[RMDB]
RNA sequence: GGGAACGACUCGAGUAGAGUCGAAAAACUAUUUGUUCUAUAGCAAAGAAACCCGAAACACAGCAUAUAUUUGUUAUAUAUGCUUUGUGGUACACAGCUGUUAGGACAUGAGCCAUCAGGGUCCAAAACCAUCCCUAGUCUUCGGACUAGGGAUGGUAAAAGAAACAACAACAACAAC
Reactivity to 2A3 in 0.01 (KOAc 150mM, MgCl2 10mM, bicine 150mM(pH8.5), 24C), signal-to-noise 2, nucleotides 027 to 126: a000c080u100a120u100u020u030g030u000u060c010u000a000u090a040g030c030a220a000a010g070a010a120a130c000c000c080g070a020a140a000c030a000c030a000g000c000a000u000a000u000a000u020u230u170g210u300u020a000u010a000u010a000u040g000c000u000u000u040g000u000g000g020u020a000c150a000c000a030g010c010u090g050u130u080a000g000g000a020c000a050u150g010a010g000c000c020a100u140c150a070g010g020g160u030c000c040a000a040a040
Reactivity to DMS in 0.01 (KOAc 150mM, MgCl2 10mM, bicine 150mM(pH8.5), 24C), signal-to-noise 1, nucleotides 027 to 126: a070c080u010a080u040u000u000g030u000u000c040u000a060u020a000g040c030a020a140a130g030a060a120a040c000c030c300g060a060a110a010c010a080c170a020g000c000a000u000a010u000a000u000u020u040g000u070u000a060u030a000u000a050u000g000c000u000u030u000g070u000g010g030u020a040c110a010c280a200g000c000u000g000u010u050a030g020g000a040c040a030u020g000a080g000c010c090a080u010c050a040g000g010g000u000c040c110a010a080a190